RNA sequence: GGGAACGACUCGAGUAGAGUCGAAAAGCAAACCGCGGACGUGCUAAGCUACUCGCAAAAGUAGUCGAUAAAAUCAAUGAGUAUGCAAAAGAUGAGACCGACUUAAUUGAUAUGUAUGCAGCUAAGGAUAAAGAUGACAAAUUUGUCAUUGAUGAGACCGUAGUCCAUCAUUCGUGAUGGACUACGGAAAAGAAACAACAACAACAAC
Reactivity to 2A3 in 0.01 (KOAc 150mM, MgCl2 10mM, bicine 150mM(pH8.5), 24C), signal-to-noise 1, nucleotides 027 to 156: g170c000a010a030a000c020c000g000c030g030g020a020c000g010u020g010c000u010a040a000g000c000u010a010c000u040c050g110c010a010a050a020a000g000u010a000g010u010c050g010a020u150a060a110a000a040u020c080a000a030u040g000a000g030u050a000u160g000c000a010a010a300a020g050a060u160g010a050g020a060c140c060g020a120c000u090u110a120a060u120u030g000a010u000a050u100g100u070a030u040g000c000a000g010c020u100a030a130g000g070a160u120a090a080a020g040a000u000g000a050c000a000a220a210u210u270u050g000u000c040a040u000u040g010a010u130g040a020g050a070